[RMDB]
This 177-nucleotide RNA was probed chemically with DMS and 2A3. The RNA was probed in 150 mM KOAc, 10 mM MgCl2 and 150 mM bicine (pH 8.5) at 24 C. 2A3 adducts were read by reverse transcription with SuperScript II with manganese. The data come from the RNA Mapping Database (RMDB), library TTRDES. For DMS the reverse transcriptase was MarathonRT. For DMS, 1,432 sequencing reads were counted.
RNA sequence: GGGAACGACUCGAGUAGAGUCGAAAAGAUAUGGACGUGGAGUGGCUCAACAGCCGUCACUCGGAAACGAGUGGACGGACAUGAGCGCCACGUCCUAAGUCAAAGUACCAUCCUUCGGGAUGGUACACAUUGGCCAAUCCUUCGGGAUUGGCCAAUGAAAAGAAACAACAACAACAAC
Reactivity to DMS in 0.01 (KOAc 150mM, MgCl2 10mM, bicine 150mM(pH8.5), 24C), signal-to-noise 1, nucleotides 027 to 126: g000a060u000a100u000g000g020a030c000g040u000g000g000a010g020u010g050g000c000u000c000a180a090c180a270g020c000c030g030u000c000a020c000u000c000g010g020a010a010a040c000g000a010g000u010g010g000a030c010g050g000a000c040a260u000g020a010g000c020g020c000c000a010c000g020u030c000c000u010a000a060g000u000c020a090a110a120g010u000a010c000c000a010u000c000c000u000u010c200g030g020g010a010u030g000g010u000a000c000a080
Reactivity to 2A3 in 0.01 (KOAc 150mM, MgCl2 10mM, bicine 150mM(pH8.5), 24C), signal-to-noise 2, nucleotides 027 to 126: g020a000u040a030u090g000g010a000c030g020u010g000g030a230g130u300g280g000c020u020c050a300a280c070a270g000c000c010g000u020c020a000c000u000c000g000g000a010a040a000c000g000a020g000u060g040g300a010c000g000g010a010c050a300u300g000a000g000c000g000c010c000a010c000g000u000c000c000u040a000a000g000u020c070a150a000a000g000u000a000c000c000a000u000c020c020u010u070c260g160g000g000a010u000g000g000u000a000c000a000